The record gives the reactivity of an RNA of 207 nucleotides to 2A3.
2A3 adducts were read by reverse transcription with SuperScript II with manganese.
The 2A3 profile rests on 653 reads.
The RNA was probed in 150 mM KOAc, 10 mM MgCl2 and 150 mM bicine (pH 8.5) at 24 C.
Values cover nucleotides 27 to 156.

RNA sequence: GGGAACGACUCGAGUAGAGUCGAAAAGUAUUUAGCUUGAGAUAGCUAAAUCACCUCGGUAUGAUUAGGGUGAGACCUAGGAACCGUAGGGGUAUUCUCAAAGGAAGCUUUUGCAGUGGCGCCCAUGAAAACGCGGAGACGUUCGCGUCUCCGCGAAGAGUUUAAUACAGUUCGCUGUAUUAAACUCAAAAGAAACAACAACAACAAC
Reactivity to 2A3 in 0.01 (KOAc 150mM, MgCl2 10mM, bicine 150mM(pH8.5), 24C), signal-to-noise 1, nucleotides 027 to 156: g070u070a010u000u010u000a000g000c000u030u020g030a030g000a080u090a050g010c010u000a000a010a000u000c000a040c000c000u010c010g010g000u300a250u170g030a050u060u010a010g030g000g030u050g130a010g060a060c000c000u020a020g000g010a030a020c020c040g050u050a030g000g020g000g010u030a070u090u030c020u000c000a060a030a030g090g010a100a020g020c020u000u080u110u160g050c030a020g030u030g030g010c030g030c000c000c000a100u160g100a010a100a000a020c030g050c000g160g000a010g000a000c010g010u040u080c130g050c020g090u030c010u010c010c020g000c030g000a010a040